[RMDB]
RNA sequence: GGGAACGACUCGAGUAGAGUCGAAAAUGAAAUAACUAGCAUGCAUAAGACGAGGUAGAGCGCGCGCUCUACCAAAAGAAGUGUGUAAAAACGCACGUGUAGGCGCGGCUACACAAAUAAACAAAAACUGUAAGUAUACGUUCGCGUAUACUUACAGAAAAGAAACAACAACAACAAC
Reactivity to DMS in 0.01 (KOAc 150mM, MgCl2 10mM, bicine 150mM(pH8.5), 24C), signal-to-noise 3, nucleotides 027 to 126: u020g020a080a080a070u010a050a130c070u030a100g000c030a040u000g000c030a070u010a050a080g010a150c140g020a200g010g000u000a020g000a020g000c000g030c300g030c250g010c000u000c000u010a020c000c010a010a010a030a070g010a080a100g010u010g000u000g000u000a060a040a050a090a100c030g000c020a030c060g000u000g030u000a030g010g000c030g000c070g000g010c070u000a010c020a020c030a030a050a060u020a040a020a040c080a050a070a060a060a050
Reactivity to 2A3 in 0.01 (KOAc 150mM, MgCl2 10mM, bicine 150mM(pH8.5), 24C), signal-to-noise 3, nucleotides 027 to 126: u120g050a070a040a060u160a070a020c060u040a030g040c020a040u100g000c020a040u080a220a050g090a090c050g040a050g030g010u020a000g000a010g000c150g000c050g050c060g020c110u000c000u000a000c000c000a000a010a020a010g050a070a030g010u020g000u010g010u090a060a080a050a050a040c040g030c000a030c050g010u030g000u020a010g010g030c080g000c070g190g010c010u030a010c010a000c010a030a110a010u110a040a060a010c050a020a080a020a010a030